[RMDB]
RNA sequence: GGGAACGACUCGAGUAGAGUCGAAAAAGUCAUGCAGCGACUUAAAGAAGAUGAGCAGGCAGAAUUGGUGAGUAAGCUAGGAUUUGAAUUUGUGGAGCACGUAAUCAAUUGUGCAGACUUUGAGAGAGUUAACUAGCACGUUCGCGUGCUAGUUAACAAAAGAAACAACAACAACAAC
Reactivity to 2A3 in 0.01 (KOAc 150mM, MgCl2 10mM, bicine 150mM(pH8.5), 24C), signal-to-noise 3, nucleotides 027 to 126: a000g060u060c070a090u120g080c070a060g010c000g090a040c020u010u010a160a020a000g160a020a000g020a060u170g040a000g000c040a020g010g010c000a000g100a060a060u090u090g010g020u070g020a010g000u070a090a000g000c000u030a020g070g050a120u030u010u080g130a150a160u060u060u110g070u090g070g000a010g040c000a000c040g010u050a000a090u050c020a030a070u080u090g030u000g060c030a010g070a090c000u070u120u220g050a120g010a010g000a000
Reactivity to DMS in 0.01 (KOAc 150mM, MgCl2 10mM, bicine 150mM(pH8.5), 24C), signal-to-noise 3, nucleotides 027 to 126: a040g040u020c000a110u000g040c090a130g000c040g010a040c090u000u000a030a120a120g010a060a050g040a130u020g010a080g000c070a080g030g030c110a080g010a040a010u000u020g010g000u020g000a060g020u020a040a070g020c100u000a060g010g010a040u050u030u000g010a060a080u030u040u020g000u020g000g010a080g020c050a020c010g000u020a000a050u010c120a000a040u000u030g010u010g000c010a050g000a030c020u010u010u020g000a060g010a090g030a220